Chemical mapping of a 177-nucleotide RNA with DMS and 2A3. For 2A3 the reverse transcriptase was SuperScript II with manganese. The DMS profile rests on 2,115 reads.
[RMDB]
RNA sequence: GGGAACGACUCGAGUAGAGUCGAAAAUACAUAGUGGAAACACCAGGGCCACAUUACUUAGGUAUCAAGAUGAACGACGUGGAACUAGCUUAUUAAAUUGGCAAAAGAUAGACACCAAGAAAUAGAAGAUGAUGAGUCUAUUCGUAGACUCAUCAUCAAAAGAAACAACAACAACAAC
Reactivity to DMS in 0.01 (KOAc 150mM, MgCl2 10mM, bicine 150mM(pH8.5), 24C), signal-to-noise 3, nucleotides 027 to 126: u000a100c070a080u000a060g030u000g010g010a090a060a100c070a050c040c020a060g020g010g000c010c040a060c060a050u000u000a050c070u000u000a060g010g020u020a030u000c100a080a090g010a070u010g000a090a100c140g010a060c120g030u000g000g000a060a050c070u000a050g030c040u000u000a040u000u010a010a050a130u020u010g000g020c070a040a050a070a110g010a090u010a050g000a090c100a060c030c010a040a040g000a050a070a050u000a070g010a090a110
Reactivity to 2A3 in 0.01 (KOAc 150mM, MgCl2 10mM, bicine 150mM(pH8.5), 24C), signal-to-noise 2, nucleotides 027 to 126: u220a020c050a020u110a040g020u020g050g040a060a050a010c000a020c050c000a000g000g000g000c040c030a050c000a030u050u100a030c060u080u120a070g020g020u030a050u130c060a070a030g060a170u080g070a070a010c080g080a010c050g050u050g010g030a020a020c010u040a040g020c010u080u000a040u100u170a170a140a150u120u050g030g000c020a130a000a000a030g020a000u070a030g050a020c010a000c030c000a010a030g060a060a080a010u120a040g120a150a000